[RMDB]
RNA sequence: GGGAACGACUCGAGUAGAGUCGAAAACACGGACUAGCAUUCUGCGUAUCUUGUCGCUUCUAAGCGCAGAGUGCGAAACCUAAAGGAAUGCGACUGAGCAUGGAGUCUCUUUUCUGACACCAAUUUCGGACGCGGGUUCGACUCCCGCCGCCUCCACGAUGACAUAGUGGUUCGCCACUAUGUCAUCAAAAGAAACAACAACAACAAC
Reactivity to DMS in 0.01 (KOAc 150mM, MgCl2 10mM, bicine 150mM(pH8.5), 24C), signal-to-noise 1, nucleotides 027 to 156: c020a200c080g010g030a070c030u000a270g000c010a050u000u010c020u010g010c010g070u010a120u010c020u000u020g000u010c050g000c000u000u000c030u010a070a250g020c000g000c020a010g010a020g080u000g050c000g000a030a080a070c040c020u000a060a130a120g000g020a030a080u000g010c070g010a110c070u000g010a130g020c070a140u000g000g010a140g020u000c020u000c050u020u000u010u020c000u020g000a150c030a170c010c000a070a230u000u000u000c030g000g010a100c090g060c030g000g000g000u000u000c100g020a300c050u000c000c010c000g010c000c040g000c040c050u000c020c020a150c300
Reactivity to 2A3 in 0.01 (KOAc 150mM, MgCl2 10mM, bicine 150mM(pH8.5), 24C), signal-to-noise 4, nucleotides 027 to 156: c090a030c060g070g000a030c070u070a030g010c000a000u000u020c000u000g000c010g020u040a130u090c100u110u150g100u100c070g060c070u110u030c080u190a090a050g010c000g010c000a000g000a000g010u000g000c000g010a000a000a000c020c010u080a100a090a000g060g010a030a040u130g020c030g050a040c030u070g070a010g060c050a100u110g100g030a020g030u010c020u050c000u100u100u020u050c040u040g050a020c010a030c090c050a110a170u100u190u160c060g000g000a030c030g000c000g000g020g010u020u040c010g020a020c030u030c010c000c010g020c020c020g010c000c000u030c020c010a080c100

Chemical mapping of a 207-nucleotide RNA with DMS and 2A3. For 2A3, 2,504 sequencing reads were counted. 2A3 adducts were read by reverse transcription with SuperScript II with manganese. High DMS reactivity at an A or C suggests that its Watson-Crick edge is free. It was measured as part of the RMDB library ARCHII. DMS adducts were read by reverse transcription with MarathonRT. The reactions ran in a buffer of 150 mM KOAc, 10 mM MgCl2 and 150 mM bicine (pH 8.5), at 24 C.